[RMDB]
RNA sequence: GGGAACGACUCGAGUAGAGUCGAAAAUGGUUGUAGGUGUGCAGGAACACAGACCUUCUUUAUGGAUCUAACAUCUUUUAACAUCCCAUGGCACACUUUUGGGAAAUGCUGCCUGAGGACCCUGACCCAGAUGAACUAGGGCUUCUCUUCUGGGAGACCAGUAGGAUAAUUUCGAUUAUCCUACUGGAAAAGAAACAACAACAACAAC
Reactivity to 2A3 in 0.01 (KOAc 150mM, MgCl2 10mM, bicine 150mM(pH8.5), 24C), signal-to-noise 4, nucleotides 027 to 156: u130g010g000u020u060g030u080a050g000g030u010g020u020g050c030a040g030g090a120a020c080a010c020a070g040a090c020c000u090u050c050u060u260u080a160u210g050g010a080u020c020u040a030a040c020a110u060c030u050u160u050u110a060a040c030a050u030c010c040c000a040u080g050g000c030a010c010a030c040u090u060u040u090g070g010g020a060a100a030u070g020c030u020g010c020c010u040g020a140g020g020a040c010c000c020u060g040a050c000c000c000a000g020a070u060g010a030a040c050u060a110g000g120g010c000u050u020c020u010c000u060u010c020u030g020g000g000a050g020a020
Reactivity to DMS in 0.01 (KOAc 150mM, MgCl2 10mM, bicine 150mM(pH8.5), 24C), signal-to-noise 2, nucleotides 027 to 156: u010g000g030u000u010g000u010a040g030g020u010g000u000g000c040a140g010g000a050a080c040a070c030a070g020a040c020c030u000u000c080u000u000u000a090u010g000g000a060u000c040u000a090a100c080a100u010c040u000u000u000u000a070a110c060a130u000c000c010c000a110u000g000g000c040a050c060a060c050u000u000u000u000g010g020g030a070a050a070u000g030c050u000g000c010c000u010g020a140g000g010a060c040c010c010u010g020a160c000c000c000a090g000a090u000g000a030a090c040u010a080g020g010g030c030u000u000c060u000c020u000u000c050u000g020g000g010a190g020a160